[RMDB]
The record gives the reactivity of an RNA of 177 nucleotides to DMS and 2A3. For 2A3 the reverse transcriptase was SuperScript II with manganese.

RNA sequence: GGGAACGACUCGAGUAGAGUCGAAAAGAUAUGGAAACGCUGGCGCUUGGAUUUAUGGGAAACGUGUGAUAUGUCGGAAACGACAUAUCACACUAUCCCAUUGUCAGCGUUGGCGUUUCCUAAGUCAGAUGUUAAUAAAGUUCGCUUUAUUAACAUCAAAAGAAACAACAACAACAAC
Reactivity to DMS in 0.01 (KOAc 150mM, MgCl2 10mM, bicine 150mM(pH8.5), 24C), signal-to-noise 5, nucleotides 027 to 126: g010a060u000a300u000g000g000a010a010a010c010g020c000u000g000g000c010g000c010u020u020g030g010a030u010u010u010a010u000g010g000g010a010a130a160c300g010u000g010u000g000a020u000a000u010g010u000c000g000g000a130a100a260c010g020a020c000a010u000a000u000c000a000c000a000c000u000a230u000c000c000c000a000u000u000g000u000c000a020g000c020g030u000u000g010g010c000g000u000u000u000c000c010u000a010a080g010u000c060a170
Reactivity to 2A3 in 0.01 (KOAc 150mM, MgCl2 10mM, bicine 150mM(pH8.5), 24C), signal-to-noise 3, nucleotides 027 to 126: g020a030u130a050u230g000g020a000a010a010c000g020c020u010g040g030c040g040c080u180u300g300g020a130u300u300u250a030u130g000g010g040a030a140a060c150g020u010g010u000g000a000u000a000u000g000u000c020g010g020a080a110a040c010g010a000c000a000u000a000u000c000a000c000a010c000u000a000u000c010c000c000a000u000u000g000u010c010a000g000c000g000u000u000g000g000c000g000u000u000u000c000c000u000a000a000g000u000c000a020